[RMDB]
RNA sequence: GGGAACGACUCGAGUAGAGUCGAAAAACGUUGAUAUGGAUUUACUCCGAGGAGACGAACUACCACGAACAGGGGAGACUCUACCCGUGGCGUCUCCGUUUGACGAGUAAGUCAUAAGUCAACAUGCACAGAUGUGGGUUCGCCCACAUCAAAAGAAACAACAACAACAAC
Reactivity to DMS in 0.01 (KOAc 150mM, MgCl2 10mM, bicine 150mM(pH8.5), 24C), signal-to-noise 8, nucleotides 027 to 129: a040c120g000u010u030g020a060u020a280u120g060g000a000u100u020u000a040c000u000c000c020g030a040g010g010a040g010a000c010g000a110a040c090u070a300c000c020a040c010g040a060a260c150a080g020g010g040g030a110g020a170c000u000c030u030a100c190c050c010g000u010g030g010c000g020u060c010u050c030c020g010u060u030u030g050a080c300g000a030g000u000a000a000g020u030c010a000u030a040a170g040u020c000a010a010c000a040u060g020c080a070c130a020
Reactivity to 2A3 in 0.01 (KOAc 150mM, MgCl2 10mM, bicine 150mM(pH8.5), 24C), signal-to-noise 8, nucleotides 027 to 129: a020c100g000u000u000g010a010u020a030u220g100g000a020u000u020u000a000c000u000c010c010g020a050g000g000a000g030a000c000g020a060a040c090u180a070c110c010a000c010g020a090a040c050a100g000g000g000g000a060g040a050c000u000c010u030a060c030c020c020g000u000g010g000c000g010u000c000u010c010c000g010u050u030u080g010a010c000g000a000g000u000a000a000g000u000c010a010u010a030a020g010u000c000a000a000c020a040u170g070c120a100c010a060
Chemical mapping of a 170-nucleotide RNA with DMS and 2A3.
The DMS profile rests on 24,465 reads.
For 2A3 the reverse transcriptase was SuperScript II with manganese.
The 2A3 profile rests on 37,170 reads.
Source: RMDB library 15KLIB, as collected in RNAgym.